An RNA of 177 nucleotides, treated with 2A3 and DMS and read out base by base.
The DMS profile rests on 6,568 reads.
The reactions ran in a buffer of 150 mM KOAc, 10 mM MgCl2 and 150 mM bicine (pH 8.5), at 24 C.
Values are in units of 0.01, from 0 to 300, in steps of 10.
Reactivities are given for positions 27 through 126.
[RMDB]
RNA sequence: GGGAACGACUCGAGUAGAGUCGAAAACGGUCAAAGUACAGGCGGGUACGGCAGAGUGCGGCCGCAUUACUUUUGUAAUGAGCACUCCGGCCGCAGCCUCCGUCGCCGCCUCGACGGAGGAGACCGGCCUCGUAUUAGCAUUCGUGCUAAUACGAGGAAAAGAAACAACAACAACAAC
Reactivity to 2A3 in 0.01 (KOAc 150mM, MgCl2 10mM, bicine 150mM(pH8.5), 24C), signal-to-noise 3, nucleotides 027 to 126: c020g010g040u060c050a150a070a130g010u040a100c010a010g000g010c000g040g020g020u040a060c000g070g050c090a010g050a030g140u020g000c000g010g020c020c010g030c010a000u030u020a010c000u130u300u240u300g020u010a020a010u020g010a020g120c050a020c100u030c040c000g010g010c000c000g000c010a030g060c000c000u030c000c000g000u010c010g010c000c010g000c000c000u000c030g010a010c020g040g000a060g000g070a060g040a030c000c030g060g020
Reactivity to DMS in 0.01 (KOAc 150mM, MgCl2 10mM, bicine 150mM(pH8.5), 24C), signal-to-noise 5, nucleotides 027 to 126: c040g010g020u010c030a100a140a140g000u010a080c080a020g000g000c010g010g000g020u000a050c020g010g010c170a050g010a070g030u000g010c000g020g010c040c030g020c000a010u000u000a000c010u000u010u010u020g020u000a020a010u010g000a130g000c070a090c080u000c210c050g010g010c000c000g030c020a030g000c060c000u000c000c010g010u000c040g010c010c010g000c000c010u000c030g010a030c030g000g000a140g010g000a240g000a040c050c030g010g000